RNA sequence: GGGAACGACUCGAGUAGAGUCGAAAACAUUGCUCUGAUCAUCUGAAGAUCAGCUAUUAGAAGAGAAAGAUCAGUUAAGUCCUUUGGACCUGAUCAGCUUGAUACAAGAACUACUGAUUUCAACUUCAAAACGGGUGCUACUUCGGUAGCACCCGAACCAAACCGAGAACUUCGGUUCUCGGUUUGGAAAAGAAACAACAACAACAAC
Reactivity to 2A3 in 0.01 (KOAc 150mM, MgCl2 10mM, bicine 150mM(pH8.5), 24C), signal-to-noise 1, nucleotides 027 to 156: c040a000u130u290g050c070u030c000u030g020a000u010c000a070u020c030u220g100a180a060g000a010u000c010a040g000c000u020a100u280u280a060g010a030a000g030a000g030a000a000a100g020a000u000c010a000g000u010u210a290a040g000u030c010c000u140u130u130g090g000a070c030c070u150g050a060u070c060a010g050c000u000u070g060a000u060a300c070a060a000g040a150a000c070u090a030c000u050g000a060u090u000u090c010a130a140c000u060u010c000a000a000a110a150c030g000g030g000u000g000c000u000a000c010u010u040c250g070g000u000a000g020c000a000c000c000c000g000a000a000
Chemical mapping of a 207-nucleotide RNA with 2A3. The data come from the RNA Mapping Database (RMDB), library M2RFPK.